[RMDB]
RNA sequence: GGGAACGACUCGAGUAGAGUCGAAAAGUUUCUACUGGACUCCGAAGCGCAUGCCAAGAUUGUAGUAAUUCUUGUAAAACAUACUACAAAAAAAAUAGUUGCAAAUAACGACAACUACGCUUUAGCAGCUUAAUGCUAACCGAUGCAAGAAUUGACUCAAAUUACUCGAGUUCGCUCGAGUAAUUUGAAAAGAAACAACAACAACAAC
Reactivity to 2A3 in 0.01 (KOAc 150mM, MgCl2 10mM, bicine 150mM(pH8.5), 24C), signal-to-noise 1, nucleotides 027 to 156: g010u020u010u040c020u050a210c090u060g000g080a040c020u000c050c030g110a100a060g000c040g020c100a080u130g020c020c000a030a060g060a130u000u050g050u000a000g020u010a030a120u090u000c020u040u080g050u070a050a120a000a050c010a040u110a030c030u070a030c000a070a000a140a000a000a000a000a000u040a000g000u000u010g000c020a030a090a140u210a230a050c030g060a040c020a030a000c010u040a040c040g020c040u000u040u040a010g000c030a000g010c030u120u270a070a020u130g030c000u000a000a020c000c060g080a050u070g020c010a030a030g030a090a070u020u060g030a060c020u030
The record gives the reactivity of an RNA of 207 nucleotides to 2A3. For 2A3 the reverse transcriptase was SuperScript II with manganese.